[RMDB]
Chemical mapping of a 177-nucleotide RNA with 2A3 and DMS.
For DMS the reverse transcriptase was MarathonRT.
Conditions: 150 mM KOAc, 10 mM MgCl2 and 150 mM bicine (pH 8.5), 24 C.
It was measured as part of the RMDB libraries RFM100 and RFMREP.
RNA sequence: GGGAACGACUCGAGUAGAGUCGAAAAGUAGUCGGAUUCGCAUCAAUCCACAUGUGUUGGUGUGGAUUGGAGUGAAACUUGAAUUAAAUUCCACCCCAAUCCACUACACAUGUGGAUUGAGGUGAAUACUUUCUAGAAGUUUCGACUUCUAGAAAGUAAAAGAAACAACAACAACAAC
Reactivity to 2A3 in 0.01 (KOAc 150mM, MgCl2 10mM, bicine 150mM(pH8.5), 24C), signal-to-noise 9, nucleotides 027 to 126: g170u180a020g050u060c070g030g040a050u020u000c010g000c010a020u000c000a000a000u000c000c000a000c000a000u010g030u010g040u050u150g160g160u110g010u020g070g000a000u000u000g000g010a000g000u010g020a100a050a060c060u050u090g080a060a070u180u160a130a100a120u060u010c030c000a010c000c010c000c000a000a000u000c000c000a000c010u040a000c010a000c000a010u010g000u000g000g000a000u000u000g000a000g000g000u000g000a000a000u010
Reactivity to DMS in 0.01 (KOAc 150mM, MgCl2 10mM, bicine 150mM(pH8.5), 24C), signal-to-noise 5, nucleotides 027 to 126: g010u020a060g010u010c040g010g000a100u000u000c010g010c010a080u000c000a000a000u000c000c000a010c000a010u000g010u000g010u000u030g030g020u020g020u000g000g010a010u000u000g000g000a040g000u000g000a020a010a030c130u010u000g020a160a120u010u010a040a040a160u000u000c040c010a010c000c010c000c000a000a000u000c000c000a010c000u000a050c020a010c030a010u010g010u000g000g000a000u000u000g000a010g000g030u000g000a010a030u000